Background: This 177-nucleotide RNA was probed chemically with 2A3 and DMS. It was measured as part of the RMDB library TTRDEL. The 2A3 profile rests on 2,115 reads.
RNA sequence: GGGAACGACUCGAGUAGAGUCGAAAAGAUAUGGACCAACUCCCCACCAUUUAAUCUCGAAGAACUCGGAAACGAGGGAGAGGAUAAAUGAGGUUGGUCCUAAGUCAAAUCCGCGUUCGCGCGGAAAUCUUCAUAAGCAGUUCGCUGCUUAUGAAGAAAAAGAAACAACAACAACAAC
Reactivity to 2A3 in 0.01 (KOAc 150mM, MgCl2 10mM, bicine 150mM(pH8.5), 24C), signal-to-noise 1, nucleotides 027 to 126: g080a020u130a120u300g000g010a000c000c000a000a060c030u120c020c090c000c000a030c020c000a020u020u030u020a060a090u030c010u020c000g120a250a070g030a100a050c000u010c020g010g040a100a060a040c010g010a000g000g000g020a010g000a010g020g010a000u030a040a010a030u020g020a070g030g000u000u000g000g000u000c000c000u020a070a000g020u020c050a060a020a190u000c000c010g000c050g030u060u070c300g000c000g000c000g150g000a070a000a000
Reactivity to DMS in 0.01 (KOAc 150mM, MgCl2 10mM, bicine 150mM(pH8.5), 24C), signal-to-noise 2, nucleotides 027 to 126: g000a070u000a230u000g000g000a010c000c010a020a020c010u000c090c020c020c040a300c080c000a020u000u020u000a010a060u000c000u000c010g000a090a130g000a120a150c000u020c000g010g010a090a130a130c020g000a010g030g000g000a080g010a050g000g000a080u000a020a010a000u000g000a150g020g000u000u000g010g010u000c000c010u020a030a050g000u020c090a040a090a080u010c020c000g010c000g010u000u000c150g010c000g040c010g000g000a010a070a050
The RNA was probed in 150 mM KOAc, 10 mM MgCl2 and 150 mM bicine (pH 8.5) at 24 C.